RNA sequence: GGGAACGACUCGAGUAGAGUCGAAAACCUUCGAGGGGGUUCACACCUCCAGUCGGCGGGCCGGCUACUCUUCUUUCCCUUCUCUCGUCUUCCUCGGUCAACCUCUUAAGUUCCUCUUCUUCUUCCUCACGAGUUAGGUUCGCCUAACUCAAAAGAAACAACAACAACAAC
Reactivity to 2A3 in 0.01 (KOAc 150mM, MgCl2 10mM, bicine 150mM(pH8.5), 24C), signal-to-noise 9, nucleotides 027 to 129: c000c000u030u040c100g060a150g000g010g000g000g020u110u110c060a050c010a020c070c010u000c010c000a040g090u040c030g020g020c010g010g020g030c020c010g020g010c010u040a060c020u030c010u070u020c000u020u040u030c010c010c000u060u030c030u000c000u010c010g060u000c020u090u030c010c010u020c010g010g010u040c030a060a080c020c010u050c000u070u090a090a040g020u040u030c000c000u020c000u020u010c000u020u010c000u030u010c010c030u040c010a060c100
Reactivity to DMS in 0.01 (KOAc 150mM, MgCl2 10mM, bicine 150mM(pH8.5), 24C), signal-to-noise 9, nucleotides 027 to 129: c040c000u000u010c110g010a110g010g030g020g020g020u010u030c210a120c200a160c020c010u000c000c000a080g040u020c050g020g020c070g020g000g040c060c040g040g000c050u040a020c020u020c010u000u000c020u000u000u000c020c010c030u000u000c050u000c010u000c060g030u010c050u000u000c020c020u000c030g010g010u030c050a080a140c060c030u050c030u030u030a080a100g030u000u000c010c030u000c070u010u000c010u000u000c020u000u000c020c020u000c060a090c140